[RMDB]
RNA sequence: GGGAACGACUCGAGUAGAGUCGAAAAGGUCGCGGCUCUGGCCCAGGACGAGCUGCUGCGUGACAUUCUGACGAAUCGGUACGCGGAGUCUCGGGAAGAGAUUCACCGUUCGCUUCAGAGGGUGGCCGCCAUGGUUGGCUUUCGAGCCAACCAUGGCAAAAGAAACAACAACAACAAC
Reactivity to 2A3 in 0.01 (KOAc 150mM, MgCl2 10mM, bicine 150mM(pH8.5), 24C), signal-to-noise 1, nucleotides 027 to 126: g070g010u110c000g010c000g120g000c000u000c030u020g110g020c020c000c000a010g030g020a070c030g010a030g000c030u090g000c090u080g010c040g170u130g000a010c000a010u070u070c030u090g040a040c040g030a000a060u250c110g000g100u110a090c000g030c080g180g030a020g000u000c010u020c020g000g010g120a150a280g030a060g000a000u010u010c020a010c060c000g000u010u000c000g020c080u110u020c020a000g000a030g000g050g000u000g030g040c050c020